An RNA of 177 nucleotides, treated with DMS and 2A3 and read out base by base.
RNA sequence: GGGAACGACUCGAGUAGAGUCGAAAAGAUAUGGAUCCACAAGCUUUUGACGACGUGUGGGUCGGAAACGACCCACUCGUCGAUAAGCUUGGGAUCCUAAGUCAAAAGAAGUCACUUCGGUGACUUCGCUCCUACUAGACUUCGGUCUAGUAGGAGCAAAAGAAACAACAACAACAAC
Reactivity to DMS in 0.01 (KOAc 150mM, MgCl2 10mM, bicine 150mM(pH8.5), 24C), signal-to-noise 2, nucleotides 027 to 126: g010a070u000a300u000g010g000a010u000c010c000a150c000a010a020g010c000u000u000u020u020g040a200c160g000a000c040g020u010g030u000g000g010g020u000c000g020g000a060a100a210c000g000a010c000c010c000a000c000u000c000g030u000c000g000a040u000a010a030g000c010u000u010g000g000g000a010u000c000c010u000a000a070g000u010c020a120a130a100a200g000a010a000g010u000c010a030c000u000u010c230g050g030u010g010a010c000u000u000c000
Reactivity to 2A3 in 0.01 (KOAc 150mM, MgCl2 10mM, bicine 150mM(pH8.5), 24C), signal-to-noise 3, nucleotides 027 to 126: g010a010u070a020u130g000g000a000u020c000c000a250c010a300a010g000c040u080u270u300u300g300a300c250g000a000c040g020u020g000u040g050g000g020u040c030g040g000a070a050a010c010g010a000c000c000c000a000c010u000c000g010u010c010g010a000u000a010a000g000c010u010u000g030g000g000a000u000c000c010u010a020a000g000u030c030a040a060a030a270g020a000a010g000u000c010a000c030u080u180c300g140g010u000g000a000c000u010u000c010